[RMDB]
RNA sequence: GGGAACGACUCGAGUAGAGUCGAAAACGCUGCAGCGCCUCACCGACAGCUACCUGCGCCUGCUCUCGACGGGCGGCGUGAUCACGCCCGCGCUGCGCGACGCGGCGCUUGCCGCGCACGUCGAGCAGUCGAUCCUACUGUUCGCAGUAGGAUCGACAAAAGAAACAACAACAACAAC
Reactivity to 2A3 in 0.01 (KOAc 150mM, MgCl2 10mM, bicine 150mM(pH8.5), 24C), signal-to-noise 2, nucleotides 027 to 126: c040g010c070u130g000c000a040g030c020g050c020c010u100c030a080c030c050g110a110c020a040g000c020u050a100c000c030u050g010c020g030c030c020u090g020c000u000c000u040c040g090a070c040g010g000g020c000g010g010c000g030u040g030a050u140c070a030c140g020c010c030c020g000c000g000c000u030g010c020g000c010g020a030c010g020c060g010g000c040g050c160u050u250g020c000c000g000c020g010c020a030c020g040u040c000g010a020g000c030a020
Reactivity to DMS in 0.01 (KOAc 150mM, MgCl2 10mM, bicine 150mM(pH8.5), 24C), signal-to-noise 3, nucleotides 027 to 126: c080g010c020u020g020c050a080g010c070g030c020c070u000c070a080c080c030g000a100c070a060g010c030u000a110c080c040u020g000c080g010c060c020u000g010c040u000c040u000c060g000a070c060g010g010g000c020g000g000c050g010u010g000a080u010c110a090c130g000c010c030c050g040c040g010c030u000g010c040g010c020g010a120c010g000c040g000g000c030g010c140u010u000g000c050c050g020c000g010c050a050c000g000u000c020g000a050g020c180a070